[RMDB]
RNA sequence: GGGAACGACUCGAGUAGAGUCGAAAACGCAAUAGGACCAAUCAUUGUAUUGAGAUAAUGAUAAGAAUGCUCAAUGUAAUUCAUGGUAUUAUCAUAAGAUGCAAUCAUAUUAGGGCAUGCAUUAUUCGCUUGAAGACUGCUUCGGCAGUCUUCAAGCAAAAGAAACAACAACAACAAC
Reactivity to DMS in 0.01 (KOAc 150mM, MgCl2 10mM, bicine 150mM(pH8.5), 24C), signal-to-noise 1, nucleotides 027 to 126: c090g000c130a150a070u020a120g000g040a160c040c030a130a080u020c140a000u000u040g010u050a040u000u000g010a070g010a000u000a020a140u030g000a150u010a140a050g000a090a030u010g000c000u000c070a060a040u010g030u010a030a040u000u000c130a170u000g000g030u000a070u000u000a030u000c100a110u000a050a060g000a030u000g000c070a040a000u020c140a030u040a200u020u010a110g000g040g000c040a060u000g030c040a040u000u000a080u020u060c160
Reactivity to 2A3 in 0.01 (KOAc 150mM, MgCl2 10mM, bicine 150mM(pH8.5), 24C), signal-to-noise 2, nucleotides 027 to 126: c070g000c030a000a040u090a250g060g010a010c010c020a010a030u010c060a060u050u080g000u000a040u000u060g000a030g000a020u080a150a060u070g090a060u050a160a070g090a080a140u130g030c010u010c090a100a050u040g020u040a080a080u080u060c060a020u060g010g040u080a050u020u120a020u060c030a030u000a230a050g050a070u020g050c000a030a030u060c030a040u060a300u260u100a030g000g050g040c090a050u000g020c000a000u140u130a110u150u150c090

Chemical mapping of a 177-nucleotide RNA with DMS and 2A3. For 2A3, 693 sequencing reads were counted. The RNA was probed in 150 mM KOAc, 10 mM MgCl2 and 150 mM bicine (pH 8.5) at 24 C. For DMS the reverse transcriptase was MarathonRT. It was measured as part of the RMDB library OK2TST. Reactivities are given for positions 27 through 126.